[RMDB]
RNA sequence: GGGAACGACUCGAGUAGAGUCGAAAACUGCCGCCGGGACGCAGUGAUCCUCGCAGGGUCGCACGGUCGCCUCGGGUCGGCCUCGUGUCGGCUCAACCUGCGAGGGGAGCGAGUGGCGAGCCCGACCAAAACUUUCUCGCCUUCGGGCGAGAAAGAACUACAGGAUGUAGUUCGCUACAUCCUGUAGAAAAGAAACAACAACAACAAC
Reactivity to 2A3 in 0.01 (KOAc 150mM, MgCl2 10mM, bicine 150mM(pH8.5), 24C), signal-to-noise 2, nucleotides 027 to 156: c020u050g020c010c000g010c000c010g080g110g130a050c020g000c030a140g200u000g010a010u000c000c000u000c010g030c000a000g020g020g000u100c020g000c010a010c010g000g000u000c000g000c000c030u020c000g020g000g010u010c000g000g010c020c000u070c070g100u140g160u200c030g020g000c030u120c260a000a020c010c000u010g000c000g000a000g010g000g000g000a000g010c000g010a090g080u110g000g000c000g010a060g010c000c030c000g060a030c010c020a060a070a010a040c000u030u000u000c000u000c010g010c000c000u010u050c240g060g010g000c000g000a000g000a000a010a000g010a000a020
The data come from the RNA Mapping Database (RMDB), library M2RFPK. An RNA of 207 nucleotides, treated with 2A3 and read out base by base. Values cover nucleotides 27 to 156. The reactions ran in a buffer of 150 mM KOAc, 10 mM MgCl2 and 150 mM bicine (pH 8.5), at 24 C.